[RMDB]
RNA sequence: GGGAACGACUCGAGUAGAGUCGAAAAGGGGUCGUCACGAAGAACUCACUUGACUUCCACUACCCACCGCUAACUGAAGCCUCCACGGUUAGCGAGGUGGAAGCAAUGAGUGAGGGAGUGACGACGGAGGCACCCAAAAGGGGAGUUCGCUCCCCAAUCCUUGUAGUUUCUUCGGAAACUACAAGGAAAAAGAAACAACAACAACAAC
Reactivity to DMS in 0.01 (KOAc 150mM, MgCl2 10mM, bicine 150mM(pH8.5), 24C), signal-to-noise 1, nucleotides 027 to 156: g000g000g000g000u010c010g000u000c010a030c000g010a130a250g010a150a300c030u000c000a040c010u000u010g000a070c000u020u000c010c030a050c000u010a020c030c000c040a300c050c000g000c000u020a000a050c010u040g030a170a210g010c000c070u000c010c000a300c010g020g000u000u000a020g020c010g000a020g040g000u000g000g010a050a000g040c020a030a130u010g010a030g020u000g000a050g000g020g000a030g030u000g000a070c000g000a000c000g010g020a010g220g060c040a190c020c000c010a100a020a170a040g000g010g000g010a070g030u000u000c050g100c020u000c000c000c000c010a000a060
Reactivity to 2A3 in 0.01 (KOAc 150mM, MgCl2 10mM, bicine 150mM(pH8.5), 24C), signal-to-noise 2, nucleotides 027 to 156: g060g020g090g020u010c000g000u010c000a020c030g140a300a050g000a000a000c000u000c000a010c020u050u080g300a090c000u020u000c000c000a000c000u030a050c020c090c040a010c010c010g000c000u000a000a000c000u010g030a050a010g010c010c000u010c000c000a000c000g000g010u010u000a000g010c000g010a010g000g000u000g010g010a000a000g000c000a030a030u010g000a000g010u000g000a000g000g000g000a010g000u000g000a000c000g000a000c000g000g000a000g000g010c000a020c000c000c010a020a140a050a050g020g010g010g000a030g020u060u130c180g030c090u000c000c010c010c000a000a010